[RMDB]
RNA sequence: GGGAACGACUCGAGUAGAGUCGAAAACAGGACGUUAGCAUAGGUCCAUUUUACUAUGCAGAUUGCAUCGUCGGAGACGACGUAGAGACCGCCACAGCAGGGUCGAUGACCUGCUGAAUUACACCUCUUUUCAUAGCGAGGGAUCAAGCUAUGUACAACUAGGCCAUUAUUUCGAUAAUGGCCUAGUAAAAGAAACAACAACAACAAC
Reactivity to 2A3 in 0.01 (KOAc 150mM, MgCl2 10mM, bicine 150mM(pH8.5), 24C), signal-to-noise 3, nucleotides 027 to 156: c030a030g030g030a010c070g050u120u150a050g000c050a020u020a040g040g000u050c010c010a010u040u030u010u030a050c020u020a010u000g010c010a020g080a240u220u250g080c100a090u030c030g020u000c010g020g000a030g000a030c010g010a000c030g000u070a020g000a010g030a070c000c120g040c050c020a040c000a000g000c000a030g000g030g080u140c120g120a070u120g070a050c000c000u000g000c000u000g010a000a020u040u040a030c040a000c060c010u020c020u010u040u060u100c010a000u010a000g000c030g010a010g040g030g040a020u140c120a070a000g000c010u000a010u010g010u030a070c020a110
Reactivity to DMS in 0.01 (KOAc 150mM, MgCl2 10mM, bicine 150mM(pH8.5), 24C), signal-to-noise 1, nucleotides 027 to 156: c040a100g030g020a030c020g020u000u010a220g000c010a060u000a020g020g000u000c060c050a150u000u010u020u010a070c020u010a030u000g010c020a150g000a150u000u020g000c050a130u020c080g040u010c000g030g000a300g000a300c040g010a060c000g030u010a100g020a160g020a110c070c010g010c060c040a190c000a000g010c020a030g000g010g010u010c090g000a070u000g000a180c000c000u010g000c000u000g000a050a040u010u020a100c050a040c050c000u000c000u000u000u000u000c000a040u000a040g010c000g020a130g000g030g030a100u020c030a070a260g020c000u000a030u000g020u000a090c060a240